Chemical mapping of a 207-nucleotide RNA with DMS and 2A3.
In probing experiments dimethyl sulfate is read out at A N1 and C N3, which are open when not base-paired.
RNA sequence: GGGAACGACUCGAGUAGAGUCGAAAAGUCCGUUUUCGAACGGACAGUGCGUACUACAAGACAUGUCCUAUUCUGGACGUUGAAACGCUCCCAAAUAGGAGCGUGGAGUCCAUUAGAGGACAACAGCUUGUAUCGCUUUCGUUACUUUCGAGUAACGUAGCGUGUGAAGUUUCGACUUCACACGCUAAAAAGAAACAACAACAACAAC
Reactivity to DMS in 0.01 (KOAc 150mM, MgCl2 10mM, bicine 150mM(pH8.5), 24C), signal-to-noise 2, nucleotides 027 to 156: g000u000c000c010g020u030u010u000u030c300g020a070a000c000g000g000a010c000a030g040u000g020c010g050u000a080c120u000a010c010a020a010g030a060c090a300u000g010u000c000c000u000a080u000u000c080u000g000g010a020c000g030u000u000g000a210a180a060c010g030c010u000c000c000c030a080a210a260u010a040g010g020a040g000c010g000u000g000g010a200g010u000c000c000a030u000u000a040g000a060g000g000a030c000a000a050c080a190g020c010u000u000g000u000a050u000c080g020c020u000u010u000c000g030u000u010a050c000u000u000u020c260g020a020g020u000a000a050c020g020
Reactivity to 2A3 in 0.01 (KOAc 150mM, MgCl2 10mM, bicine 150mM(pH8.5), 24C), signal-to-noise 2, nucleotides 027 to 156: g010u000c000c000g000u050u010u080u070c250g160a010a000c000g000g010a010c010a010g040u130g020c010g020u080a140c080u000a000c040a010a040g030a020c040a090u070g000u000c000c000u010a030u010u040c000u020g000g000a000c020g090u090u030g000a000a000a000c000g020c000u070c000c030c000a200a090a050u260a090g000g000a000g010c010g000u010g000g010a010g010u000c000c000a000u020u000a020g040a020g000g000a000c000a020a010c010a020g040c000u000u050g000u000a030u300c010g000c000u010u110u070c020g000u000u000a030c010u090u030u120c300g080a040g030u000a000a020c000g010
It was measured as part of the RMDB library RNAMAK. The RNA was probed in 150 mM KOAc, 10 mM MgCl2 and 150 mM bicine (pH 8.5) at 24 C.